Background:
Chemical mapping of a 207-nucleotide RNA with 2A3. 2A3 adducts were read by reverse transcription with SuperScript II with manganese. The data come from the RNA Mapping Database (RMDB), library OK3TST. The RNA was probed in 150 mM KOAc, 10 mM MgCl2 and 150 mM bicine (pH 8.5) at 24 C. Reactivities are rounded to 0.1 and cut off at 0 and 3.

RNA sequence: GGGAACGACUCGAGUAGAGUCGAAAACCAAAUGAAAUUACAGAGUAUUCAAUAAAAGCUUGUGAAAAAUUGGCCAACGCAGGUAUACCUAUUGGAAAUCAAACUGUUCUUUUAAGAGGUAUAAAUGAUUGUGUUUACAUUCAAAAAGAUCUUGUUACCCUCAUUAUGGAUUCGUCCAUAAUGAGGGAAAAGAAACAACAACAACAAC
Reactivity to 2A3 in 0.01 (KOAc 150mM, MgCl2 10mM, bicine 150mM(pH8.5), 24C), signal-to-noise 1, nucleotides 027 to 156: c040c000a090a000a020u060g000a010a010a020u080u050a040c050a000g030a000g110u060a070u040u030c010a010a010u130a080a170a020a020g080c050u110u070g000u030g130a180a070a110a220a120u300u210g120g010c030c110a010a000c010g030c010a010g030g040u070a090u070a110c000c010u000a050u040u090g020g040a040a040a040u120c030a160a010a130c020u020g090u040u020c010u030u060u030u020a060a020g050a040g100g020u040a110u110a110a000a050u070g040a030u030u060g010u030g020u030u010u030a040c030a030u000u120c000a000a090a140a110a040g220a090u230c040u070u010g010u100u080a120